[RMDB]
Structure probing data (DMS and 2A3) for a 177-nucleotide construct. For 2A3 the reverse transcriptase was SuperScript II with manganese.

RNA sequence: GGGAACGACUCGAGUAGAGUCGAAAAGUGUAGGAUAGGUGGGAGACUGUGAAGCGGGCACGCCAGUGUUCGUGGAGUCGUUGUUGAAAUACCACUCUGAUCGUAUUGGACAUCUAACCUCGGACCAAACUGUGUACUGCUUCGGCAGUACACAGUUAAAAGAAACAACAACAACAAC
Reactivity to DMS in 0.01 (KOAc 150mM, MgCl2 10mM, bicine 150mM(pH8.5), 24C), signal-to-noise 2, nucleotides 027 to 126: g000u000g000u050a010g030g020a070u010a010g030g080u000g010g020g010a100g030a030c010u020g000u020g000a260a180g000c010g000g000g000c010a000c000g050c140c180a100g010u000g000u000u000c000g000u000g020g010a040g020u020c050g010u000u010g000u030u000g010a090a030a070u020a050c040c030a060c080u020c100u020g000a080u000c280g000u030a060u000u000g000g010a100c040a020u000c000u000a040a130c020c000u000c020g000g000a230c040c040a040
Reactivity to 2A3 in 0.01 (KOAc 150mM, MgCl2 10mM, bicine 150mM(pH8.5), 24C), signal-to-noise 2, nucleotides 027 to 126: g100u110g120u160a010g010g010a050u000a000g000g110u010g010g040g020a110g000a020c000u030g190u010g300a070a000g010c030g000g080g000c000a000c010g100c050c110a010g050u010g000u040u050c000g000u020g000g010a000g030u000c050g000u000u150g050u040u070g060a020a020a050u100a020c010c040a100c040u190c080u150g100a120u050c010g000u020a040u040u060g110g010a000c000a000u020c000u010a010a060c000c000u000c000g000g020a030c020c050a010

Values cover nucleotides 27 to 126.